[RMDB]
RNA sequence: GGGAACGACUCGAGUAGAGUCGAAAACUUUGAUGUUUCCCAGCCAGGGAUUUUCGUCCUCAAGUUUCUUGAUCUUCUUCUUGACCUUCCGGAGAUCUUUCUCGAGUUCCUCUAACUUCUUUCUUCCGUUCACCCACUGUUCGAGGACAUCCUCUCUGUAAAUAUAGCAGUUCGCUGCUAUAUUUACAAAAGAAACAACAACAACAAC
Reactivity to 2A3 in 0.01 (KOAc 150mM, MgCl2 10mM, bicine 150mM(pH8.5), 24C), signal-to-noise 3, nucleotides 027 to 156: c030u150u100u190g090a100u180g070u020u060u000c020c000c010a000g090c090c090a040g000g040g010a090u130u080u130u200c040g030u040c000c010u040c030a050a090g020u070u060u010c040u050u130g040a070u010c000u070u020c000u100u000c010u040u100g080a110c030c000u120u050c060c080g020g030a040g030a080u020c040u030u070u050c040u040c010g060a060g020u060u000c010c000u070c010u040a090a090c020u070u060c000u050u140u010c000u080u030c030c040g070u060u070c030a110c060c010c030a060c070u060g030u110u080c050g010a000g020g020a020c010a050u050c000c000u010c010u000c030u010